RNA sequence: GGGAACGACUCGAGUAGAGUCGAAAAAAAAGUCGCGUGAAAGAGGUAAGGACAGAGAUAGAGAACAGGAGCGGUCGCGUGAACACUCUAGCGAUAGGGGAAGGGAUCGUGAUUAUAGAGAUGAUAGUCUCCGUACAGGAUUCGUCCUGUACGGAGAAAAAGAAACAACAACAACAAC
Reactivity to DMS in 0.01 (KOAc 150mM, MgCl2 10mM, bicine 150mM(pH8.5), 24C), signal-to-noise 2, nucleotides 027 to 126: a030a050a060a060g010u010c010g010c080g020u020g020a060a100a040g010a050g000g000u000a100a070g000g000a050c040a070g000a060g030a090u000a100g000a060g020a050a030c100a020g010g000a100g010c060g000g000u000c080g010c090g000u000g010a210a100c150a070c080u000c000u010a070g020c190g010a110u000a020g000g000g000g000a100a120g000g010g010a060u010c030g000u000g030a090u010u010a100u000a080g020a080g000a060u000g000a140u020a120g010
Chemical mapping of a 177-nucleotide RNA with DMS. For DMS, 983 sequencing reads were counted. The RNA was probed in 150 mM KOAc, 10 mM MgCl2 and 150 mM bicine (pH 8.5) at 24 C. Values cover nucleotides 27 to 126.